[RMDB]
RNA sequence: GGGAACGACUCGAGUAGAGUCGAAAACAGAUGGCAUGAAAGAAGAACUCAAGCCAAAUCCGUACAUAACUUAUCGUGCUAGCAUGUUAGACAAAGAUCGCAUUUGCGUUACCACUAUACAAAGCUUCUCUACUGUGCAACACGUUAAAGAUGUGGACAAAUUACAAAGCUUCGGCUUUGUAAUUUGAAAAGAAACAACAACAACAAC
Reactivity to DMS in 0.01 (KOAc 150mM, MgCl2 10mM, bicine 150mM(pH8.5), 24C), signal-to-noise 3, nucleotides 027 to 156: c050a100g030a100u000g020g010c020a120u000g010a070a150a110g020a120a140g020a120a180c070u000c050a070a070g020c030c010a050a110a090u000c010c020g040u000a130c030a050u000a040a080c030u000u000a040u000c020g060u000g020c020u010a160g060c020a020u000g020u010u000a040g020a070c050a070a060a070g010a120u000c130g000c050a210u020u010u010g040c030g000u000u010a070c120c140a090c090u020a090u000a020c030a040a040a050g010c000u000u000c050u000c020u000a030c030u000g000u010g010c000a030a020c010a020c020g030u010u000a030a080a070g010a090u000g000u010g020g020a190
Reactivity to 2A3 in 0.01 (KOAc 150mM, MgCl2 10mM, bicine 150mM(pH8.5), 24C), signal-to-noise 9, nucleotides 027 to 156: c040a020g120a120u070g020g000c030a030u100g080a050a080a140g150a100a040g040a100a060c050u030c070a080a030g010c010c000a040a080a020u020c020c010g040u070a020c010a040u100a150a110c020u030u030a020u060c000g010u010g020c030u030a050g000c020a020u050g020u070u050a020g010a040c080a050a180a030g050a070u080c050g010c110a170u020u040u270g010c020g030u050u070a090c050c060a090c120u140a070u070a290c080a050a090a020g010c020u060u010c010u000c000u030a040c030u040g010u020g010c000a030a010c000a010c020g010u010u020a030a040a010g050a030u040g010u050g020g000a010
Chemical mapping of a 207-nucleotide RNA with DMS and 2A3. Values cover nucleotides 27 to 156. The reactions ran in a buffer of 150 mM KOAc, 10 mM MgCl2 and 150 mM bicine (pH 8.5), at 24 C. DMS adducts were read by reverse transcription with MarathonRT.